An RNA of 177 nucleotides, treated with 2A3 and DMS and read out base by base. The reactions ran in a buffer of 150 mM KOAc, 10 mM MgCl2 and 150 mM bicine (pH 8.5), at 24 C. For 2A3 the reverse transcriptase was SuperScript II with manganese.
RNA sequence: GGGAACGACUCGAGUAGAGUCGAAAAAUCAGAGAAAGGACAUUGUACGCUACUGCAAAGAGCACCUGGCCAAAAGAUCCAUGUACCCAUCCCACGCUGAGCUGGAGAAGGCCGCCAAGAAGCUGGCAUAUAUCAUAACCUUCGGGUUAUGAUAUAUAAAAGAAACAACAACAACAAC
Reactivity to 2A3 in 0.01 (KOAc 150mM, MgCl2 10mM, bicine 150mM(pH8.5), 24C), signal-to-noise 4, nucleotides 027 to 126: a000u040c030a030g030a020g080a140a110a020g060g000a020c020a060u060u130g040u140a050c060g020c030u090a090c010u080g030c030a090a080a020g040a020g020c010a030c020c010u050g010g000c020c000a000a110a050a050g030a010u010c020c010a010u060g030u080a080c000c020c010a030u040c010c000c010a030c020g020c030u060g040a030g000c010u010g000g010a070g020a050a010g070g010c020c020g000c010c010a040a050g100a040a020g050c030u030g010g040c000
Reactivity to DMS in 0.01 (KOAc 150mM, MgCl2 10mM, bicine 150mM(pH8.5), 24C), signal-to-noise 9, nucleotides 027 to 126: a090u000c050a080g000a110g000a080a080a080g010g000a070c060a060u010u000g010u010a060c140g000c030u000a080c080u010g000c090a060a080a080g000a080g010c040a060c060c040u000g010g000c030c040a030a060a070a070g000a070u000c030c020a040u000g010u000a080c030c020c020a100u010c020c010c020a090c140g010c060u000g010a070g010c030u000g010g010a090g010a080a090g010g010c040c040g010c020c060a040a080g010a070a060g010c040u000g010g000c150

Values are in units of 0.01, from 0 to 300, in steps of 10.